[RMDB]
RNA sequence: GGGAACGACUCGAGUAGAGUCGAAAAGGGCCAGAGCGGGAGUUUUGUCCGUUGUGUCCCGCGAAUCGCCGGCCGGAGGGAAGGGCCGUCAGGCCGGCGGGUGGCUUAAAACUACUCUUCGGAGUAGGAAUUCAAAGUAGUUCGCUACUUUGAAUUCAAAAGAAACAACAACAACAAC
Reactivity to DMS in 0.01 (KOAc 150mM, MgCl2 10mM, bicine 150mM(pH8.5), 24C), signal-to-noise 2, nucleotides 027 to 126: g030g000g030c010c010a040g010a180g020c010g000g000g000a040g010u000u000u000u000g000u000c080c050g010u000u020g030u000g010u000c000c000c010g030c010g010a100a150u000c010g020c010c000g020g000c000c010g000g030a090g000g010g010a280a110g020g020g020c000c010g010u000c030a070g000g000c010c000g040g030c000g010g000g000u000g010g000c010u000u000a050a060a100a300c010u000a000c000u000c000u010u010c160g020g000a010g010u000a000g000
Reactivity to 2A3 in 0.01 (KOAc 150mM, MgCl2 10mM, bicine 150mM(pH8.5), 24C), signal-to-noise 1, nucleotides 027 to 126: g000g010g010c000c010a010g010a010g030c020g000g050g000a020g000u010u020u120u180g060u100c040c030g020u020u040g070u010g010u010c000c010c000g000c000g010a030a030u040c000g000c000c010g000g030c010c020g010g040a080g010g040g030a100a180g090g070g130c030c040g100u020c010a010g000g000c000c020g000g000c010g010g010g000u010g000g000c000u000u010a000a010a000a050c000u010a000c010u010c000u040u070c180g070g000a000g000u000a010g030
An RNA of 177 nucleotides, treated with DMS and 2A3 and read out base by base. The RNA was probed in 150 mM KOAc, 10 mM MgCl2 and 150 mM bicine (pH 8.5) at 24 C. As a SHAPE reagent, 2A3 marks flexible, mostly unpaired nucleotides at the ribose 2'-OH. For DMS the reverse transcriptase was MarathonRT. It was measured as part of the RMDB library RFMREP.